[RMDB]
RNA sequence: GGGAACGACUCGAGUAGAGUCGAAAAGAUAUGGACCAUAAUUUCGCGAAACGAUCGUAUCGGAAACGAUACAAUCGGAGAAACUAUGGUCCUAAGUCAAAGGAAGAUUACUUCGGUAAUCUUCCAAUCGUCCUAUGAAGUUCGCUUCAUAGGACGAAAAAGAAACAACAACAACAAC
Reactivity to 2A3 in 0.01 (KOAc 150mM, MgCl2 10mM, bicine 150mM(pH8.5), 24C), signal-to-noise 1, nucleotides 027 to 126: g000a000u010a000u040g020g000a000c010c000a000u010a010a040u020u030u010c020g000c200g300a260a040a010c000g000a000u000c010g010u000a000u020c000g000g000a010a000a000c000g000a000u020a000c000a010a000u010c000g000g010a070g010a020a000a010c000u010a000u010g010g010u040c000c000u000a010a000g000u000c000a030a100a090g040g020a010a000g000a010u000u020a010c000u070u130c300g000g000u000a010a000u000c010u000u000c000c010a000a040
Reactivity to DMS in 0.01 (KOAc 150mM, MgCl2 10mM, bicine 150mM(pH8.5), 24C), signal-to-noise 2, nucleotides 027 to 126: g000a020u000a010u010g000g010a010c010c010a010u000a010a010u000u000u000c000g040c240g000a160a050a030c000g010a010u000c040g030u010a000u010c000g020g010a000a000a020c000g010a010u010a020c000a010a000u000c000g030g000a000g000a000a010a000c040u000a000u000g000g000u010c000c000u000a000a070g000u010c000a090a180a220g010g010a010a010g020a020u000u000a000c000u000u020c200g070g000u000a000a010u000c000u000u000c000c000a030a030